[RMDB]
RNA sequence: GGGAACGACUCGAGUAGAGUCGAAAAGAUAUGGAGCGUAAUUCUUCGAUAAGAUAUUGAUCGGAAACGAUCAUAUCUUUUGACGAAGUUAUACGCUCCUAAGUCAAAACGCUGGUUCGCCAGCGAACAGAGGACUACAGUUCGCUGUAGUCCUCUGAAAAGAAACAACAACAACAAC
Reactivity to 2A3 in 0.01 (KOAc 150mM, MgCl2 10mM, bicine 150mM(pH8.5), 24C), signal-to-noise 3, nucleotides 027 to 126: g040a010u070a020u210g000g000a010g000c010g010u010a110a300u240u060c010u010u000c020g040a070u010a120a020g020a000u020a040u110u300g000a000u000c020g000g090a080a070a070c000g000a020u000c010a000u000a000u000c000u040u060u030u040g150a110c040g000a000a010g010u070u080a190u000a110c000g000c010u000c000c010u000a010a010g010u000c000a020a000a110a090c010g010c000u000g000g080u070u090c300g110c160c030a000g000c000g010a020a000
Reactivity to DMS in 0.01 (KOAc 150mM, MgCl2 10mM, bicine 150mM(pH8.5), 24C), signal-to-noise 3, nucleotides 027 to 126: g000a030u030a300u000g000g010a010g050c000g030u010a040a300u000u000c000u000u000c000g030a030u000a040a050g000a010u000a010u000u010g020a010u000c000g020g020a050a050a160c020g020a000u000c000a020u000a000u000c000u000u000u000u000g030a150c150g000a020a010g000u000u000a130u010a010c000g040c020u000c000c000u000a000a050g020u000c030a090a080a130a150c020g040c000u010g020g020u000u020c300g010c000c000a020g010c000g000a090a140
Structure probing data (2A3 and DMS) for a 177-nucleotide construct.
2A3 adducts were read by reverse transcription with SuperScript II with manganese.
Reactivities are given for positions 27 through 126.
The RNA was probed in 150 mM KOAc, 10 mM MgCl2 and 150 mM bicine (pH 8.5) at 24 C.